[RMDB]
RNA sequence: GGGAACGACUCGAGUAGAGUCGAAAACUAGUGGAAGACCCGCCGCUAAGUCAGUAACCUUGCUGCGGCAAUUGCCAGCGGGAAAGGUGCCCGGUACGAAUCCUGGGGUCGUCGCUGUACUCGUGCGAGUAAUCCACGAUGCUACAAGGCGCUAAGCGUUCGAUACAUACUUCGGUAUGUAUCGAACAAAAGAAACAACAACAACAAC
Reactivity to 2A3 in 0.01 (KOAc 150mM, MgCl2 10mM, bicine 150mM(pH8.5), 24C), signal-to-noise 1, nucleotides 027 to 156: c040u010a020g020u010g120g000a020a090g050a060c000c000c000g040c040c020g000c050u080a120a080g080u080c020a000g000u050a090a100c030c000u040u050g000c010u010g000c000g030g040c040a150a210u100u300g000c010c020a020g030c040g000g000g080a210a030a000g020g000u030g000c040c020c000g000g040u110a150c080g080a070a100u040c000c070u120g000g000g000g000u010c030g040u000c030g000c090u040g000u030a010c020u000c030g000u020g020c190g000a000g010u080a030a070u010c000c010a000c020g000a010u100g000c020u020a010c000a080a030g010g000c000g010c070u130a150a000g090c040
About this RNA: Structure probing data (2A3) for a 207-nucleotide construct. The RNA was probed in 150 mM KOAc, 10 mM MgCl2 and 150 mM bicine (pH 8.5) at 24 C. 2A3 adducts were read by reverse transcription with SuperScript II with manganese.